[RMDB]
RNA sequence: GGGAACGACUCGAGUAGAGUCGAAAACGCACAGCCACCCAUGACGAAAACGCAUCCCAGACACGAGGCUGAAGAAGAAGAAAAAAACACCGGUAAACAUGGGGAAGACGAAAAUAAGUUCACAGAAAGCUAGUAGUGGUUUCGACCACUACUAGCUAAAAGAAACAACAACAACAAC
Reactivity to DMS in 0.01 (KOAc 150mM, MgCl2 10mM, bicine 150mM(pH8.5), 24C), signal-to-noise 1, nucleotides 027 to 126: c050g000c080a060c020a110g020c050c000a010c080c000c070a020u000g000a040c120g030a060a050a050a110c110g000c040a010u040c020c000c000a160g030a000c050a100c020g000a060g000g000c000u050g010a140a000g000a040a080g000a200a070g000a000a000a100a050a070a000a040c120a010c030c050g000g040u000a070a040a150c120a020u040g040g000g000g000a040a120g000a000c100g000a050a000a060a050u000a050a100g000u020u000c100a000c160a160g000a020a120
Reactivity to 2A3 in 0.01 (KOAc 150mM, MgCl2 10mM, bicine 150mM(pH8.5), 24C), signal-to-noise 1, nucleotides 027 to 126: c040g000c040a130c020a030g000c000c000a060c060c030c000a140u050g090a100c000g150a170a090a110a000c040g000c040a040u000c000c070c000a000g030a000c000a000c120g100a010g070g000c110u110g000a000a000g000a000a000g080a060a000g130a110a060a130a000a000a000a020c050a020c060c010g020g000u090a250a100a000c000a080u020g000g000g000g020a000a090g110a000c010g060a000a000a230a000u170a000a160g000u020u030c000a000c000a030g300a000a030